Structure probing data (DMS and 2A3) for a 207-nucleotide construct. As a SHAPE reagent, 2A3 marks flexible, mostly unpaired nucleotides at the ribose 2'-OH. For DMS, 3,447 sequencing reads were counted. The RNA was probed in 150 mM KOAc, 10 mM MgCl2 and 150 mM bicine (pH 8.5) at 24 C.
RNA sequence: GGGAACGACUCGAGUAGAGUCGAAAAAGCCUGAGCAAGGAGCCAUGGCCUCAUUCCCUGGGUCUCUCAUGGCUUCAACUGUAAGACAAACAGCACCAGCCCUGAGCAGGGAGUUGGAAAGGGACUCAGGUGUUGAACAUGAGAUCACUGAUCAGUGCAUUUCAAGUGGAUUCGUCCACUUGAAAUGAAAAGAAACAACAACAACAAC
Reactivity to DMS in 0.01 (KOAc 150mM, MgCl2 10mM, bicine 150mM(pH8.5), 24C), signal-to-noise 2, nucleotides 027 to 156: a120g000c020c010u000g000a050g040c060a120a110g000g000a070g050c060c040a070u010g020g000c060c020u000c060a080u000u020c100c000c010u030g020g010g000u010c000u020c050u000c000a160u000g010g030c010u000u000c000a080a090c020u000g010u010a140a130g000a160c230a200a160a120c030a040g000c040a180c030c060a070g010c010c010c020u010g000a160g050c140a110g020g030g000a040g040u000u010g030g010a100a090a090g010g000g020a100c030u000c020a030g020g010u000g020u000u010g020a070a100c040a090u010g020a100g020a080u000c010a120c040u000g020a070u000c020a090g040u010g020
Reactivity to 2A3 in 0.01 (KOAc 150mM, MgCl2 10mM, bicine 150mM(pH8.5), 24C), signal-to-noise 3, nucleotides 027 to 156: a000g070c010c010u030g020a040g010c050a090a140g040g010a000g020c000c010a030u030g030g000c000c060u030c040a100u120u150c010c000c000u000g020g000g020u020c030u000c010u020c080a030u030g000g000c000u020u020c030a060a060c020u020g040u170a090a050g120a150c090a100a180a010c010a040g050c030a030c020c020a010g000c000c000c010u110g040a060g060c030a050g020g010g020a080g040u020u060g020g020a080a060a050g040g000g000a030c010u010c010a010g040g000u050g020u030u070g030a070a020c020a050u090g040a040g020a130u060c060a070c200u080g030a080u110c090a050g030u030g030